[RMDB]
RNA sequence: GGGAACGACUCGAGUAGAGUCGAAAAUACCGCAGGCCUGCGGUGCGGCAGUGUGGAGACCUGCCGUAAGCCGUGUUGUUUUGACAACCGGCAGAAAGCGUAUGCGGAGGCAGCGCUUUCAGGGUCUAAAAGUAUGGGAUCUUCGGAUCCCAUACAAGAAAACCGUGAGGUUCGCCUCACGGUUUUCAAAAGAAACAACAACAACAAC
Reactivity to 2A3 in 0.01 (KOAc 150mM, MgCl2 10mM, bicine 150mM(pH8.5), 24C), signal-to-noise 1, nucleotides 027 to 156: u050a000c000c000g000c000a010g000g010c000c000u000g020c010g000g000u000g000c010g000g000c010a020g020u000g000u190g300g100a060g020a120c000c000u000g000c000c000g040u040a090a010g000c000c040g080u130g030u230u000g010u010u120u030u300g130a000c000a010a000c000c000g000g020c000a000g000a000a020a000g000c000g000u040a300u240g010c010g040g130a050g220g080c020a000g000c000g000c000u000u000u000c000a000g000g020g010u020c000u010a030a020a010a080g010u000a000u000g000g010g030a000u000c010u020u080c230g000g020a000u010c000c000c000a000u000a000c000a000a000